This 177-nucleotide RNA was probed chemically with 2A3 and DMS. For DMS the reverse transcriptase was MarathonRT. For 2A3, 2,413 sequencing reads were counted. Source: RMDB library OK1LIB, as collected in RNAgym. For DMS, 2,468 sequencing reads were counted.
RNA sequence: GGGAACGACUCGAGUAGAGUCGAAAACAAUUGUGAGAGGAUACUUUUAGUACCAGCGAGUACACGCAGUAUACUGCCACUUGUGUGAGAUUACUUUUUGUACAGCGAGUACACGCAGUAUAGUGCCCAUCCUGGUCCAUUUCGAUGGACCAGGAUGAAAAGAAACAACAACAACAAC
Reactivity to 2A3 in 0.01 (KOAc 150mM, MgCl2 10mM, bicine 150mM(pH8.5), 24C), signal-to-noise 5, nucleotides 027 to 126: c030a080a180u080u110g040u130g050a120g000a020g060g020a050u100a190c010u010u010u050u240a050g010u020a010c010c030a060g210c050g080a090g050u010a000c040a010c070g000c010a010g110u000a010u020a020c010u010g010c010c010a010c020u030u010g030u000g040u060g120a110g060a210u190u120a120c070u160u190u110u100u140g070u060a020c000a020g020c000g030a010g010u160a040c040a010c090g010c010a000g010u000a010u020a020g160u010g010c030c010
Reactivity to DMS in 0.01 (KOAc 150mM, MgCl2 10mM, bicine 150mM(pH8.5), 24C), signal-to-noise 2, nucleotides 027 to 126: c050a070a070u000u000g000u030g030a070g000a110g000g010a090u010a010c010u000u010u030u030a130g000u000a020c010c070a210g000c110g000a090g000u000a020c050a120c230g000c050a000g000u020a000u000a030c000u020g010c000c110a010c050u030u020g000u000g000u020g060a090g000a130u100u000a080c090u010u020u090u070u040g000u000a020c010a080g010c070g020a010g050u000a040c100a060c300g000c000a030g000u000a000u000a010g000u020g000c080c200